[RMDB]
RNA sequence: GGGAACGACUCGAGUAGAGUCGAAAAUUGGAAGGUGGUGUGAGGCGAAGCGGCUGGAGGCAGGAGGCUAGCGGAUUGGGGGGAAGAAAAGCCGAAAUGGAUUCCCGGGUUCAUGGAUGGAAGAGAAUGAACUAGUACAGUUCGCUGUACUAGUUCAAAAAGAAACAACAACAACAAC
Reactivity to DMS in 0.01 (KOAc 150mM, MgCl2 10mM, bicine 150mM(pH8.5), 24C), signal-to-noise 4, nucleotides 027 to 126: u040u040g000g030a090a050g010g010u010g000g060u020g010u010g020a060g000g010c070g000a100a080g010c100g020g010c040u010g020g010a060g000g020c080a060g000g000a080g010g010c050u020a070g000c070g010g000a090u010u000g010g030g000g000g010g000a080a060g010a040a070a080a080g000c030c030g010a080a060a090u030g000g000a140u010u010c010c010c000g010g010g010u000u010c100a040u010g010g000a100u020g000g000a050a050g000a100g010a080a140
Reactivity to 2A3 in 0.01 (KOAc 150mM, MgCl2 10mM, bicine 150mM(pH8.5), 24C), signal-to-noise 3, nucleotides 027 to 126: u070u080g090g020a050a020g070g010u080g000g040u020g020u040g050a060g030g050c040g020a020a010g070c040g070g030c050u060g000g000a030g010g030c060a010g000g060a020g000g000c070u080a030g010c010g000g000a020u070u090g010g000g000g000g010g010a040a010g040a010a110a010a000g030c000c000g050a110a040a030u110g020g050a020u030u040c040c000c000g000g000g020u000u050c040a010u040g080g020a040u040g020g040a060a010g040a000g040a060a040